[RMDB]
RNA sequence: GGGAACGACUCGAGUAGAGUCGAAAAUAUUAGGGUGUGAGAGUAUCUCUCUCCCAGCCGGUUCGCGCAGCCAUCUUUUUCGACUUUACUUGGGUUAGCUGCGCGAACUGGCUGGCGUUCGCAGCAACAAAUUUCAUAAGUUCGCUUAUGAAAUUUGAAAAGAAACAACAACAACAAC
Reactivity to 2A3 in 0.01 (KOAc 150mM, MgCl2 10mM, bicine 150mM(pH8.5), 24C), signal-to-noise 3, nucleotides 027 to 126: u110a040u090u090a030g000g020g000u030g000u010g010a030g010a030g030u240a300u070c070u000c000u010c000u000c060c000c000a000g010c000c010g020g020u000u010c010g000c010g000c010a010g020c040c030a120u050c110u040u140u050u040u070c050g030a030c000u130u180u200a070c050u110u110g050g000g000u050u070a010g000c000u010g000c000g000c020g010a000a000c000u000g010g020c000u000g000g010c000g000u010u010c020g010c050a070g060c000a020a070
Reactivity to DMS in 0.01 (KOAc 150mM, MgCl2 10mM, bicine 150mM(pH8.5), 24C), signal-to-noise 3, nucleotides 027 to 126: u000a050u010u000a180g000g000g010u000g010u000g000a020g010a050g010u000a100u020c050u000c010u000c010u000c020c000c000a020g000c000c000g000g010u000u000c010g010c010g000c000a020g020c010c100a050u000c010u000u000u010u000u000c030g010a050c050u000u010u010a070c150u010u000g000g010g010u000u000a040g010c010u000g010c000g020c010g010a000a010c000u000g010g010c000u000g000g010c040g010u000u000c010g000c030a160g010c150a080a140